An RNA of 177 nucleotides, treated with 2A3 and DMS and read out base by base. It was measured as part of the RMDB library OK2TST.
RNA sequence: GGGAACGACUCGAGUAGAGUCGAAAAGCAUUGACAGAAGGAUACAGAGAGCUUUGUUCGGGAGAGGGAGGGGAUGUAGACGCCAUCAGAAGACGGCUGUUCCUCUUCCGUGUGCCCAUCGCACUCCACUUGGACGUGAAUUCGUUCACGUCCAAGUAAAAGAAACAACAACAACAAC
Reactivity to 2A3 in 0.01 (KOAc 150mM, MgCl2 10mM, bicine 150mM(pH8.5), 24C), signal-to-noise 2, nucleotides 027 to 126: g020c020a060u010u180g060a030c030a050g210a110a040g080g030a050u080a140c070a030g060a020g010a000g050c000u100u060u080g080u020u080c030g000g000g000a050g000a040g030g020g010a030g000g020g020g020a040u100g070u100a040g050a110c070g020c040c010a050u050c020a040g270a300a000g040a050c020g020g010c010u010g030u040u010c020c000u000c000u010u000c000c000g000u050g000u060g010c000c000c000a030u040c030g000c010a010c030u000c010c040
Reactivity to DMS in 0.01 (KOAc 150mM, MgCl2 10mM, bicine 150mM(pH8.5), 24C), signal-to-noise 3, nucleotides 027 to 126: g020c040a060u000u000g000a100c120a110g000a100a100g020g010a110u010a090c070a100g010a120g000a070g000c030u000u000u000g010u010u000c070g010g010g000a030g010a110g010g000g000a030g010g020g010g000a070u000g020u000a020g020a060c150g010c020c010a040u010c130a160g000a110a120g010a010c060g000g010c040u000g020u000u000c000c000u000c020u000u000c000c010g010u000g020u000g010c020c030c050a080u000c100g010c080a070c080u000c010c040
High DMS reactivity at an A or C suggests that its Watson-Crick edge is free. The DMS profile rests on 3,210 reads.